[RMDB]
RNA sequence: GGGAACGACUCGAGUAGAGUCGAAAACUCAAUGUAGGGAAUAACAUUAAAUUGAUACAAAUACCUUUUUCGGUGUAGGGAAAAACACCGAAUUGAUACAAAUACCUUUCUCAAUGUAGGGAAUAACAAAACAGGCAUCGCUUCGGCGAUGCCUGAACUUUAAGCUUAAGUUCGCUUAAGCUUAAAGAAAAGAAACAACAACAACAAC
Reactivity to 2A3 in 0.01 (KOAc 150mM, MgCl2 10mM, bicine 150mM(pH8.5), 24C), signal-to-noise 5, nucleotides 027 to 156: c020u020c020a030a040u080g040u100a090g020g050g080a100a170u150a150a030c040a040u080u200a060a140a080u140u110g040a060u100a190c060a040a160a030u140a080c030c000u010u040u000u000u000c000g000g000u000g000u010a020g010g000g100a060a170a040a000a010c000a000c000c000g000a000a000u000u020g000a000u030a030c030a010a110a010u080a080c010c020u060u140u050c050u030c060a070a150u200g040u120a060g040g000g030a010a070u080a090a050c050a030a030a010a020c010a000g000g000c000a000u010c000g000c010u050u080c130g090g010c020g000a000u000g000c000c010u000g000a000a000
Reactivity to DMS in 0.01 (KOAc 150mM, MgCl2 10mM, bicine 150mM(pH8.5), 24C), signal-to-noise 2, nucleotides 027 to 156: c030u010c020a070a100u000g040u000a050g030g000g000a110a130u000a080a080c010a050u010u000a040a030a030u000u000g000a040u000a070c020a060a130a070u010a020c020c000u000u000u000u000u000c020g000g000u010g030u000a040g050g010g020a080a090a130a130a000c010a010c010c000g010a000a010u000u010g010a070u010a040c030a060a120a070u010a010c020c020u000u010u000c050u000c060a040a030u000g010u020a070g020g000g000a090a050u000a030a070c050a040a060a070a160c020a010g000g000c030a040u000c000g080c000u000u010c300g060g040c000g080a010u000g080c000c000u000g010a000a030